RNA sequence: GGGAACGACUCGAGUAGAGUCGAAAAUGGUGUACCUUGUAUUUAAAUAGAACUUUUACCUAUGUGUGAUAUUUGUAACACCAGUCCAGUGAUUGAUCAUUUGGAAAAUAUUGGUUCACUGAGUUAUGCAAAUCUUCCAAAUGUUGACACAUUUUGACCACUCAGUUUUAUUCGUAAAACUGAGUGGAAAAGAAACAACAACAACAAC
Reactivity to DMS in 0.01 (KOAc 150mM, MgCl2 10mM, bicine 150mM(pH8.5), 24C), signal-to-noise 2, nucleotides 027 to 156: u010g000g020u000g020u000a060c140c110u010u020g010u010a020u000u000u000a030a070a080u000a030g010a140a120c120u010u010u000u000a170c180c020u010a030u000g040u010g030u030g010a040u000a020u010u000u020g000u020a060a100c010a020c010c000a060g010u020c020c010a140g020u000g000a130u000u010g010a070u010c020a040u010u050u000g000g000a050a020a040a080u010a100u000u000g020g020u000u010c050a200c070u000g010a150g010u010u000a120u000g030c020a020a030a050u010c050u000u000c010c000a010a030a040u000g010u000u000g000a170c110a080c050a280u000u010u010u000g000a220
Reactivity to 2A3 in 0.01 (KOAc 150mM, MgCl2 10mM, bicine 150mM(pH8.5), 24C), signal-to-noise 2, nucleotides 027 to 156: u040g010g000u000g000u030a030c030c000u020u040g050u030a040u040u110u110a070a160a040u050a020g080a020a100c040u130u220u170u240a170c060c020u110a100u090g240u020g070u080g060a020u070a010u010u060u060g030u060a130a030c000a010c020c010a020g040u020c010c010a030g030u020g070a300u040u010g040a050u130c030a030u030u020u010g050g090a010a100a040a020u130a150u050u070g030g070u100u040c070a050c160u060g150a040g180u190u180a080u140g010c020a060a000a000u040c020u020u000c000c030a000a050a050u030g040u070u070g020a020c010a000c020a050u070u000u020u140g050a060
This 207-nucleotide RNA was probed chemically with DMS and 2A3. Values cover nucleotides 27 to 156. The RNA was probed in 150 mM KOAc, 10 mM MgCl2 and 150 mM bicine (pH 8.5) at 24 C. 2A3 adducts were read by reverse transcription with SuperScript II with manganese. For DMS, 2,913 sequencing reads were counted.